[RMDB]
RNA sequence: GGGAACGACUCGAGUAGAGUCGAAAAGUACAAUUGUUAGAAGGUGCAAAAUAAUCAUGGCUAAGAAACCAACUGCGUUAAUUAUUUUAGAUGGUUUUGCGAACCGCGAAAGCGAACAUGGUAAUGCUGUUUACGAUUCAUUCGUGAAUCGUAAACAAAAAGAAACAACAACAACAAC
Reactivity to 2A3 in 0.01 (KOAc 150mM, MgCl2 10mM, bicine 150mM(pH8.5), 24C), signal-to-noise 4, nucleotides 027 to 126: g010u040a000c050a080a100u090u110g160u150u090a110g070a220a030g060g020u030g030c040a020a050a120a130u230a040a080u090c010a020u100g000g040c040u110a120a060g040a130a040a010c000c020a000a060c070u090g040c070g070u040u050a080a060u180u060a190u040u170u070u090a060g030a090u050g030g000u020u040u030u030g020c020g090a050a020c020c020g000c030g060a080a020a000g010c010g000a020a030c010a030u040g020g000u050a090a030u110g040c040
Reactivity to DMS in 0.01 (KOAc 150mM, MgCl2 10mM, bicine 150mM(pH8.5), 24C), signal-to-noise 4, nucleotides 027 to 126: g010u020a070c110a090a110u030u010g000u020u010a100g000a150a090g020g010u010g010c040a050a040a070a070u030a160a000u000c020a030u010g000g040c070u000a050a180g010a040a020a020c030c000a050a060c060u000g000c240g020u030u020a060a110u050u040a070u020u000u010u010a050g010a090u010g000g000u000u000u000u010g000c230g010a070a060c120c000g010c030g000a060a070a100g010c020g010a080a100c030a010u010g000g000u000a050a060u010g000c070